[RMDB]
RNA sequence: GGGAACGACUCGAGUAGAGUCGAAAAAAGAAGGAGGAUUUUUCCCCAAGACGCUGGUGGACUCUUGGAAUGGGAAAGAGGAGGGCGGAAAAAGAGGAGCGGGCCUCCCGAUCCGAGGGGCCCGGUGAGAGCCUCCUGUUCGCAGGAGGCAAAAGAAACAACAACAACAAC
Reactivity to 2A3 in 0.01 (KOAc 150mM, MgCl2 10mM, bicine 150mM(pH8.5), 24C), signal-to-noise 3, nucleotides 027 to 129: a000a000g090a020a020g040g030a020g020g040a070u100u040u030u060u060c000c000c000c000a060a030g080a020c060g030c120u030g040g000u090g010g020a030c010u000c030u050u070g010g020a050a050u100g010g010g020a000a050a060g050a020g030g000a010g000g030g010c040g010g010a040a070a000a070a010g050a030g030g000a020g070c020g000g000g000c000c000u020c000c000c010g040a140u030c040c050g010a060g000g000g010g030c000c000c020g000g010u080g020a170g000a010
Reactivity to DMS in 0.01 (KOAc 150mM, MgCl2 10mM, bicine 150mM(pH8.5), 24C), signal-to-noise 2, nucleotides 027 to 129: a030a080g040a110a050g000g000a010g020g010a030u010u030u020u010u010c000c010c010c120a170a100g020a070c240g000c060u040g000g040u030g010g010a080c040u010c020u040u050g020g040a000a020u000g000g000g000a030a020a030g010a070g050g000a000g010g010g010c120g080g020a040a050a020a140a000g000a110g040g000a080g030c000g000g020g040c000c000u010c050c020c070g020a050u090c220c120g000a100g000g000g000g000c040c010c050g000g000u040g010a120g050a180